[RMDB]
RNA sequence: GGGAACGACUCGAGUAGAGUCGAAAAUAAAACCGCGAAGAGAACCAAGCCUUGAGACACAAGGAGGGAUGUCUCAAGGCUUGCUUCUCGACUAGUGUCGAGUCGUUCCCAAUCCCUCCGCAAAAAACAUGUAAAGAAACUUCGGUUUCUUUACAUGAAAAGAAACAACAACAACAAC
Reactivity to 2A3 in 0.01 (KOAc 150mM, MgCl2 10mM, bicine 150mM(pH8.5), 24C), signal-to-noise 3, nucleotides 027 to 126: u090a000a090a020a030c070c050g060c090g090a090a050g090a010g020a110a030c050c010a010a000g000c000c010u000u000g000a010g000a010c000a010c020a080a040g010g000a000g000g000g000a000u010g000u010c000u010c000a010a000g020g010c000u000u000g000c000u010u000c000u010c000g000a000c000u060a050g170u030g080u220c000g000a000g000u010c000g010u010u000c000c000c000a000a000u000c000c000c000u000c000c000g010c010a110a150a000a000a000a000
Reactivity to DMS in 0.01 (KOAc 150mM, MgCl2 10mM, bicine 150mM(pH8.5), 24C), signal-to-noise 2, nucleotides 027 to 126: u000a080a070a100a120c110c090g020c130g010a080a120g020a130g000a020a070c250c000a030a020g000c000c010u000u010g000a010g010a010c000a040c200a030a030g010g010a020g000g010g010a050u000g000u000c000u000c010a010a010g020g020c010u000u000g010c070u000u000c010u000c010g000a010c030u000a080g000u010g000u000c010g000a010g000u000c000g010u000u000c000c000c000a050a020u000c000c000c000u000c000c010g040c130a000a040a070a080a030a060